RNA sequence: GGGAACGACUCGAGUAGAGUCGAAAACCAUCUUCUUCUUCUCCAUCUUUCCAUUACACGCAUCAACAGAAAUCUCCAAGACCCGACAGUUUCAAGAUCUCACCUCUUCACGAAGAUCCGCAAGAUUUAUGAAACGUUAAUUCGUUAACGUUUCAUAAAAAGAAACAACAACAACAAC
Reactivity to DMS in 0.01 (KOAc 150mM, MgCl2 10mM, bicine 150mM(pH8.5), 24C), signal-to-noise 6, nucleotides 027 to 126: c030c000a120u010c060u000u000c020u000u010c030u000u010c010u010c030c010a050u020c010u000u010u020c030c020a090u000u020a100c120a090c090g010c040a060u010c050a080a090c100a090g000a050a080a080u010c020u010c030c030a060a130g000a090c040c020c020g010a080c130a050g010u000u000u020c040a070a100g000a080u000c020u010c060a080c030c020u000c030u000u000c040a040c070g010a090a100g000a080u010c010c020g020c100a060a080g010a120u000u000
Reactivity to 2A3 in 0.01 (KOAc 150mM, MgCl2 10mM, bicine 150mM(pH8.5), 24C), signal-to-noise 9, nucleotides 027 to 126: c010c000a040u020c030u080u010c000u040u010c000u030u010c010u010c020c010a070u020c020u020u060u000c030c020a050u080u120a070c070a010c060g040c010a060u050c030a070a110c010a050g080a070a110a040u050c030u010c030c010a070a040g040a120c010c010c020g030a040c040a050g010u020u050u090c050a080a030g020a090u010c010u010c020a050c020c010u030c010u060u050c030a030c070g040a040a020g030a060u030c010c000g030c050a050a060g020a150u000u020
This 177-nucleotide RNA was probed chemically with DMS and 2A3. For DMS the reverse transcriptase was MarathonRT. Values are in units of 0.01, from 0 to 300, in steps of 10.